RNA sequence: GGGAACGACUCGAGUAGAGUCGAAAAGAUAUGGAAUCAUGACUGGGAGCGAUCGGUCUCGGAAACGAGACCAAUCGCGAAGAACAGUAUGAUUCCUAAGUCAAAAGUUGUCCCUUCGGGGACAACACCAUGGAAUUACGUUCGCGUAAUUCCAUGGAAAAGAAACAACAACAACAAC
Reactivity to 2A3 in 0.01 (KOAc 150mM, MgCl2 10mM, bicine 150mM(pH8.5), 24C), signal-to-noise 3, nucleotides 027 to 126: g000a000u030a010u080g010g020a010a000u010c000a010u070g300a270c010u010g000g020g060a300g120c000g000a000u010c050g000g000u000c000u000c000g000g010a000a030a000c000g000a000g000a000c000c000a000a000u000c010g010c010g000a070a040g030a020a010c000a000g000u000a010u000g000a000u000u000c000c000u000a010a010g020u000c020a020a010a100a150g000u000u000g000u000c010c000c000u000u040c300g130g000g000g010a000c000a000a000c000a000
Reactivity to DMS in 0.01 (KOAc 150mM, MgCl2 10mM, bicine 150mM(pH8.5), 24C), signal-to-noise 3, nucleotides 027 to 126: g010a020u000a120u010g010g000a020a000u000c000a010u000g010a030c000u010g000g000g030a160g010c000g020a000u000c030g000g010u000c000u000c000g010g020a040a020a060c000g000a020g010a000c000c000a000a000u000c000g050c000g010a060a050g000a080a130c000a020g010u000a010u000g000a010u000u000c000c000u000a010a070g000u000c020a110a070a140a130g010u000u000g000u000c000c010c000u000u020c240g020g010g000g010a000c000a010a000c010a120
Structure probing data (2A3 and DMS) for a 177-nucleotide construct. Conditions: 150 mM KOAc, 10 mM MgCl2 and 150 mM bicine (pH 8.5), 24 C. It was measured as part of the RMDB library TTRDES. Values cover nucleotides 27 to 126.